[RMDB]
Conditions: 150 mM KOAc, 10 mM MgCl2 and 150 mM bicine (pH 8.5), 24 C. An RNA of 177 nucleotides, treated with DMS and 2A3 and read out base by base. Reactivities are rounded to 0.1 and cut off at 0 and 3. For 2A3, 5,026 sequencing reads were counted. Reactivities are given for positions 27 through 126.

RNA sequence: GGGAACGACUCGAGUAGAGUCGAAAAGCAAUAGUCAUCCACCCCCCACCCACCCUGCCAGCUCCCAGGCUGGCACUCACCUGCCCUGGCGCCUGUGCCGCUCCUUCUUCUCCAGCACCCAUGCCCGUCAAUACCCAUAAUUCGUUAUGGGUAUUGAAAAAGAAACAACAACAACAAC
Reactivity to DMS in 0.01 (KOAc 150mM, MgCl2 10mM, bicine 150mM(pH8.5), 24C), signal-to-noise 8, nucleotides 027 to 126: g010c090a080a070u010a100g010u010c050a080u000c020c030a100c010c010c010c000c000c010a130c040c010c020a150c080c050c070u000g010c010c010a020g010c020u000c060c040c090a140g010g000c010u000g000g010c010a020c060u000c070a070c080c040u000g010c050c020c020u000g010g010c060g000c040c030u000g010u010g020c030c030g000c030u000c030c020u000u000c040u000u000c020u000c010c030a060g010c060a090c020c020c020a080u010g010c010c010c020g000
Reactivity to 2A3 in 0.01 (KOAc 150mM, MgCl2 10mM, bicine 150mM(pH8.5), 24C), signal-to-noise 1, nucleotides 027 to 126: g030c000a060a230u070a200g080u100c020a080u030c060c000a000c010c010c030c010c010c000a020c010c010c010a020c000c010c020u020g000c000c000a010g000c020u030c020c020c010a000g020g010c000u010g000g020c000a010c010u010c020a030c000c010u030g040c020c000c000u020g020g010c020g030c020c020u080g060u110g040c000c020g000c030u010c020c000u040u050c000u060u000c010u020c020c000a010g020c010a050c000c030c000a010u080g010c010c010c000g000
2A3 is a SHAPE reagent: it acylates the 2'-hydroxyl of flexible nucleotides of all four kinds.